This 177-nucleotide RNA was probed chemically with 2A3 and DMS.
For DMS, 2,196 sequencing reads were counted.
The 2A3 profile rests on 3,037 reads.
Reactivities are given for positions 27 through 126.
The RNA was probed in 150 mM KOAc, 10 mM MgCl2 and 150 mM bicine (pH 8.5) at 24 C.
It was measured as part of the RMDB library TTRDEL.
RNA sequence: GGGAACGACUCGAGUAGAGUCGAAAAUAGAAGAUAUGGACCUUGUGGUUAGAGAGGCCGAAGCCAUCGGAAACGAUGGAUAGCUGCUACCCACCUCUAACGUAACAUCAAGGUCCUAAGUCGGUAACAUCGCUGAUAAGUUCGCUUAUCAGCGAUGAAAAGAAACAACAACAACAAC
Reactivity to 2A3 in 0.01 (KOAc 150mM, MgCl2 10mM, bicine 150mM(pH8.5), 24C), signal-to-noise 2, nucleotides 027 to 126: u210a010g200a180a020g010a050u090a080u220g000g000a010c010c010u000u010g020u030g080g010u000u000a000g010a000g010a010g000g010c040c030g030a130a050g050c000c010a010u000c010g030g000a080a050a040c000g000a000u000g000g000a000u020a010g030c060u080g020c010u120a150c070c000c000a030c010c000u000c030u000a010a010c030g140u130a090a040c020a100u290c020a030a000g000g000u000c000c000u010a000a000g030u010c000g000g000u000a080a020
Reactivity to DMS in 0.01 (KOAc 150mM, MgCl2 10mM, bicine 150mM(pH8.5), 24C), signal-to-noise 3, nucleotides 027 to 126: u000a100g010a130a170g000a030u000a280u000g000g010a030c000c000u000u000g020u010g000g010u000u000a020g000a020g010a140g020g000c010c030g010a060a140g000c000c000a010u010c010g010g010a090a070a190c020g010a030u000g010g010a030u000a050g000c180u000g020c080u010a090c010c040c100a300c090c000u000c000u010a000a010c000g020u000a090a080c170a030u010c000a000a000g000g000u000c000c000u000a000a030g040u000c030g010g000u000a160a130